[RMDB]
RNA sequence: GGGAACGACUCGAGUAGAGUCGAAAACGUAAAGGGCGAGCUUUUGUCCGGAAUGGUUCCGCCGUGAUCGGGCGAUGCAAUAGUUGCCAACGACAACUAUGCUCCGGUUGCUCAGGCAGCGUAACGCACAAUGGAACAACCUUCGGGUUGUUCCAAACUGUAACGGUAUGUUCGCAUACCGUUACAGAAAAGAAACAACAACAACAAC
Reactivity to DMS in 0.01 (KOAc 150mM, MgCl2 10mM, bicine 150mM(pH8.5), 24C), signal-to-noise 2, nucleotides 027 to 156: c070g040u000a070a100a130g000g000g030c030g000a140g020c090u010u000u010u010g010u000c030c010g000g040a140a090u000g030g030u000u010c050c060g000c010c020g070u000g020a110u000c060g030g030g030c010g010a100u000g010c080a140a070u000a070g020u000u000g020c000c030a130a180c150g000a060c010a010a020c010u000a020u010g010c050u030c050c020g010g010u000u000g000c030u000c060a080g010g010c000a100g000c020g000u000a060a160c060g000c020a030c100a120a180u000g000g010a030a010c000a020a000c000c010u000u020c300g050g000g050u000u000g030u000u000c000c020a000a000a050
Reactivity to 2A3 in 0.01 (KOAc 150mM, MgCl2 10mM, bicine 150mM(pH8.5), 24C), signal-to-noise 4, nucleotides 027 to 156: c030g030u070a030a040a070g040g050g010c040g020a060g040c080u130u160u190u170g060u050c050c010g000g030a080a060u120g060g020u080u090c040c060g030c020c010g030u040g020a080u070c020g000g000g000c090g060a070u120g010c020a050a170u020a040g000u000u000g020c040c080a070a070c070g070a070c020a000a000c010u000a010u080g020c010u000c010c010g000g010u040u030g000c030u030c080a060g040g040c020a020g020c020g030u080a090a030c040g020c040a050c060a100a120u050g000g000a000a000c010a000a000c000c000u020u030c120g080g000g000u000u000g000u010u000c000c000a000a000a000